[RMDB]
RNA sequence: GGGAACGACUCGAGUAGAGUCGAAAAUCUGCAUACUGUACAUGUGCUGAUCUGAUCAGUACUCUAGAGCUAGAUCACGAUCCUAGUCGAGUACACACUAGCGGUACUGUAGGUACCGUACUAGCGGCUAACCUGGAAUCUUCGGAUUCCAGGUUAGAAAAGAAACAACAACAACAAC
Reactivity to 2A3 in 0.01 (KOAc 150mM, MgCl2 10mM, bicine 150mM(pH8.5), 24C), signal-to-noise 3, nucleotides 027 to 126: u020c000u000g000c010a040u080a260c040u100g030u150a030c020a170u150g000u020g000c000u000g000a010u000c120u170g020a100u020c020a020g000u020a050c030u020c060u150a060g010a020g050c040u080a030g040a020u020c050a000c090g030a010u050c000c030u060a060g170u030c020g000a010g010u020a030c090a000c000a000c060u030a030g010c000g010g000u020a010c010u080g240u300a150g200g000u010a010c000c000g030u040a040c020u000a020g020c040g060g000
Reactivity to DMS in 0.01 (KOAc 150mM, MgCl2 10mM, bicine 150mM(pH8.5), 24C), signal-to-noise 3, nucleotides 027 to 126: u000c010u000g010c050a090u010a130c060u010g000u000a030c160a140u020g020u010g020c020u010g010a010u000c150u000g010a060u000c010a020g020u010a030c050u010c080u010a050g000a100g020c030u000a040g010a020u000c050a300c080g010a040u000c030c040u010a020g000u000c030g000a020g000u000a060c070a100c040a070c020u000a000g000c010g010g000u000a000c010u000g000u000a030g010g030u000a010c010c000g000u010a040c030u000a010g020c020g020g000